[RMDB]
RNA sequence: GGGAACGACUCGAGUAGAGUCGAAAAAUUGAUGCGAAGGGGGGACGGAGAAGGGUAUGUUGGCCGGGCGACGGUUGUCCCGGUUUAAGCGUGUAGGCUGGUUUUCCAGGCAAAUCCGGAAAUUGAAGAUGAAGAUAAGGUUCGCCUUAUCUUCAUCAAAAGAAACAACAACAACAAC
Reactivity to DMS in 0.01 (KOAc 150mM, MgCl2 10mM, bicine 150mM(pH8.5), 24C), signal-to-noise 2, nucleotides 027 to 126: a090u000u000g010a070u000g010c070g010a110a070g030g000g000g000g000g020a070c120g010g020a060g010a070a080g010g000g000u000a040u010g000u000u000g010g020c010c010g010g000g010c300g020a060c160g020g010u000u000g000u010c020c000c020g010g000u010u000u000a030a060g010c050g040u000g000u000a110g010g010c030u000g020g000u010u000u020u000c010c020a110g000g020c070a010a060a100u020c030c030g000g000a070a030a100u020u010g010a130a160
The record gives the reactivity of an RNA of 177 nucleotides to DMS. Reactivities are given for positions 27 through 126. The reactions ran in a buffer of 150 mM KOAc, 10 mM MgCl2 and 150 mM bicine (pH 8.5), at 24 C. The DMS profile rests on 2,392 reads.